[RMDB]
RNA sequence: GGGAACGACUCGAGUAGAGUCGAAAAGAUAUGGACCAGGUGGGACGCGAAGAACUCGGAAACGAGGGAGCGUACCACUGGUCCUAAGUCAAAGACAAACCAAUAUCUUCGGAUAUUGGUUUGUCAAGAUCUUUCUAAGGUUCGCCUUAGAAAGAUCAAAAGAAACAACAACAACAAC
Reactivity to 2A3 in 0.01 (KOAc 150mM, MgCl2 10mM, bicine 150mM(pH8.5), 24C), signal-to-noise 5, nucleotides 027 to 126: g030a010u080a050u150g000g000a000c000c010a030g160g190u130g050g040g010a000c010g070c010g150a300a070g010a070a040c000u000c010g020g020a080a060a040c010g000a000g000g000g040a020g010c000g000u010a020c010c000a000c020u000g000g010u020c000c000u000a030a000g010u010c020a080a050a050g000a000c000a000a000a000c010c000a000a000u000a010u000c010u050u110c300g100g000a010u010a000u020u000g020g010u000u000u000g000u000c000a000a000
Reactivity to DMS in 0.01 (KOAc 150mM, MgCl2 10mM, bicine 150mM(pH8.5), 24C), signal-to-noise 5, nucleotides 027 to 126: g010a020u010a300u010g010g000a010c010c000a000g020g020u000g020g000g000a020c000g030c010g000a120a170g000a120a210c010u010c000g010g000a120a090a200c000g000a030g000g000g000a070g010c000g010u000a020c000c000a030c000u000g000g000u000c000c000u000a000a040g000u010c050a090a120a160g000a010c000a000a010a000c000c000a010a010u000a000u000c000u000u020c240g010g000a010u000a000u000u000g000g010u000u000u000g010u000c000a050a060
Chemical mapping of a 177-nucleotide RNA with 2A3 and DMS. DMS adducts were read by reverse transcription with MarathonRT. Values cover nucleotides 27 to 126. Values are in units of 0.01, from 0 to 300, in steps of 10. It was measured as part of the RMDB library TTRDEL. For DMS, 7,651 sequencing reads were counted.